This 177-nucleotide RNA was probed chemically with 2A3 and DMS. For 2A3, 1,058 sequencing reads were counted. DMS adducts were read by reverse transcription with MarathonRT. Reactivities are given for positions 27 through 126. The reactions ran in a buffer of 150 mM KOAc, 10 mM MgCl2 and 150 mM bicine (pH 8.5), at 24 C.
[RMDB]
RNA sequence: GGGAACGACUCGAGUAGAGUCGAAAAGUGUCCACAUGCACGUGUAUAUGUAUAUCUGUGAGUGUAUAUACAUGCAUGCAAUUGUGUGUAUGUGUGUUCUGUGUGUGCGUUUGCAAGUAUAUAUGCAUCUCACUAAGGCGUUCGCGCCUUAGUGAGAAAAAGAAACAACAACAACAAC
Reactivity to 2A3 in 0.01 (KOAc 150mM, MgCl2 10mM, bicine 150mM(pH8.5), 24C), signal-to-noise 1, nucleotides 027 to 126: g050u030g040u110c050c060a070c020a100u140g030c050a020c090g100u080g000u000a000u020a020u110g010u010a040u000a040u120c050u070g170u010g110a050g040u070g080u000a000u000a010u000a000c000a000u020g000c010a000u000g010c020a060a130u100u280g160u040g050u040g020u080a050u100g010u010g040u010g000u080u040c090u010g000u000g000u010g000u000g100c050g000u070u010u000g050c030a090a000g000u010a030u030a030u000a000u130g120c060a020
Reactivity to DMS in 0.01 (KOAc 150mM, MgCl2 10mM, bicine 150mM(pH8.5), 24C), signal-to-noise 1, nucleotides 027 to 126: g000u000g010u010c020c040a150c120a030u000g010c060a030c050g020u000g020u000a020u000a030u000g020u010a020u000a050u000c060u000g030u000g010a110g000u000g000u000a000u000a020u000a010c000a020u000g010c040a010u000g000c050a060a110u000u020g030u000g020u000g020u000a060u000g040u010g000u000g000u000u000c220u000g020u000g010u000g030u010g010c080g010u010u000u020g020c030a030a060g020u000a050u000a110u010a050u010g020c070a050